Chemical mapping of a 177-nucleotide RNA with 2A3 and DMS. DMS adducts were read by reverse transcription with MarathonRT. Values are in units of 0.01, from 0 to 300, in steps of 10. The RNA was probed in 150 mM KOAc, 10 mM MgCl2 and 150 mM bicine (pH 8.5) at 24 C. The DMS profile rests on 13,001 reads. The 2A3 profile rests on 26,974 reads.
RNA sequence: GGGAACGACUCGAGUAGAGUCGAAAAGAUAUGGACAAACUCAGCUUUUGACGCUUGUCUAUCGGAAACGAUAGGUAAGCGAUAAGCUGGUUUGUCCUAAGUCAAAACACCAGCUUCGGCUGGUGAACACUCUUUACAAGUUCGCUUGUAAAGAGUGAAAAGAAACAACAACAACAAC
Reactivity to 2A3 in 0.01 (KOAc 150mM, MgCl2 10mM, bicine 150mM(pH8.5), 24C), signal-to-noise 7, nucleotides 027 to 126: g010a000u040a030u110g010g010a000c000a010a010a000c150u230c300a070g000c030u110u170u300u300g300a200c090g010c000u010u000g010u000c000u010a000u000c010g010g000a020a050a010c000g000a000u000a000g000g020u010a010a000g010c000g010a010u020a010a000g000c010u000g000g000u000u000u000g000u000c000c000u010a000a000g010u000c010a020a020a070a080c010a000c000c010a000g010c000u060u120c260g230g000c000u000g000g000u000g000a000a000
Reactivity to DMS in 0.01 (KOAc 150mM, MgCl2 10mM, bicine 150mM(pH8.5), 24C), signal-to-noise 6, nucleotides 027 to 126: g000a030u000a300u000g000g000a010c010a000a010a010c000u020c000a010g010c000u000u000u010u000g020a260c080g020c000u000u000g010u000c000u000a010u000c000g000g000a080a060a130c000g020a000u000a010g000g000u000a000a010g010c000g020a040u000a010a010g020c000u000g000g010u000u000u000g000u000c000c000u000a000a060g000u000c020a110a100a120a250c010a010c000c000a000g000c000u000u010c280g020g010c000u000g000g010u000g000a060a150